RNA sequence: GGGAACGACUCGAGUAGAGUCGAAAAUCCAGCCACCGAGACCCUGUGUAUGGCACCAUCUGGCUGCAGUCGAAGACGGGCACCGAGUGCUUCUCAGCUUCCACGGAUGGGCAGGUACCCACCAGCCAGACACUGGAGAGAGGAGGGAAGGGAGGGAUGACUGACCGUAUUUCGAUACGGUCAGUCAAAAAGAAACAACAACAACAAC
Reactivity to 2A3 in 0.01 (KOAc 150mM, MgCl2 10mM, bicine 150mM(pH8.5), 24C), signal-to-noise 1, nucleotides 027 to 156: u000c010c000a000g070c000c020a070c060c040g110a030g070a150c030c000c140u080g070u030g010u170a070u110g010g000c000a020c020c050a020u070c000u000g010g000c110u010g000c050a110g050u140c060g090a050a030g030a040c110g000g080g040c030a070c070c110g110a160g090u010g020c000u180u030c100u010c020a060g000c000u000u050c000c040a010c040g040g050a150u090g000g020g000c000a050g020g210u300a300c000c000c000a000c010c000a000g010c010c010a000g000a070c000a000c010u070g020g000a050g000a010g000a040g200g170a190g000g000g080a040a080g120g050g030a160g010g000g000a050
An RNA of 207 nucleotides, treated with 2A3 and read out base by base. The data come from the RNA Mapping Database (RMDB), library OK3TST. The RNA was probed in 150 mM KOAc, 10 mM MgCl2 and 150 mM bicine (pH 8.5) at 24 C.